[RMDB]
RNA sequence: GGGAACGACUCGAGUAGAGUCGAAAAGAUAUGGAAAUUGAGACCUUCACCAGAGGCAACAGCCUGUUACAGGAUCGGAAACGAUCCACAGGACAUGCCUCGGUGAAGGUCUCAAUUUCCUAAGUCACCUAAUAGCCAACUUCGGUUGGCUAUUAGGAAAAGAAACAACAACAACAAC
Reactivity to DMS in 0.01 (KOAc 150mM, MgCl2 10mM, bicine 150mM(pH8.5), 24C), signal-to-noise 1, nucleotides 027 to 126: g000a080u020a300u000g010g010a000a000a000u000u000g020a010g040a030c000c000u010u000c030a010c000c000a220g050a010g030g000c010a050a090c300a230g010c000c000u000g000u000u000a170c290a160g050g010a030u000c020g000g000a130a110a290c000g000a030u000c000c000a030c000a040g000g000a000c130a140u010g010c000c000u000c000g000g050u020g030a000a000g000g000u000c000u000c000a010a020u000u000u000c000c000u000a020a100g020u010c050a180